This 177-nucleotide RNA was probed chemically with DMS and 2A3. DMS adducts were read by reverse transcription with MarathonRT. Conditions: 150 mM KOAc, 10 mM MgCl2 and 150 mM bicine (pH 8.5), 24 C. For 2A3, 1,281 sequencing reads were counted.
[RMDB]
RNA sequence: GGGAACGACUCGAGUAGAGUCGAAAAUUAAAAUUUGAGGCAUCAAGUGGAAGGGUAGUCGGCAGGGUCAAGGUCGGGAAGAAUGAGGAGUCUAAACCAACCAAGCUUAUGAGUGGAAUACAAAAAAGUUGUAUAGCAGAUUCGUCUGCUAUACAACAAAAGAAACAACAACAACAAC
Reactivity to DMS in 0.01 (KOAc 150mM, MgCl2 10mM, bicine 150mM(pH8.5), 24C), signal-to-noise 3, nucleotides 027 to 126: u010u010a070a050a070a120u000u010u000g000a060g010g000c060a090u010c100a050a060g010u020g000g010a080a070g010g010g000u000a090g000u000c060g020g010c070a080g020g000g030u000c070a050a060g000g020u000c080g000g000g010a070a020g010a040a050u000g010a070g020g000a060g000u000c030u000a040a070a100c040c010a040a140c040c040a060a070g020c090u000u000a040u000g000a050g030u010g020g000a080a060u000a040c090a010a050a070a060a070a110
Reactivity to 2A3 in 0.01 (KOAc 150mM, MgCl2 10mM, bicine 150mM(pH8.5), 24C), signal-to-noise 2, nucleotides 027 to 126: u030u040a120a000a040a010u100u070u070g030a020g010g060c010a020u010c040a120a080g060u070g040g050a060a050g110g030g000u050a050g040u030c040g020g050c020a010g070g000g000u020c010a050a060g010g000u050c000g000g000g040a030a050g030a040a030u120g030a040g060g010a030g000u010c000u060a070a050a080c030c020a020a030c020c010a040a010g020c040u180u120a050u180g020a000g040u040g040g070a080a010u200a090c090a000a070a000a050a020a030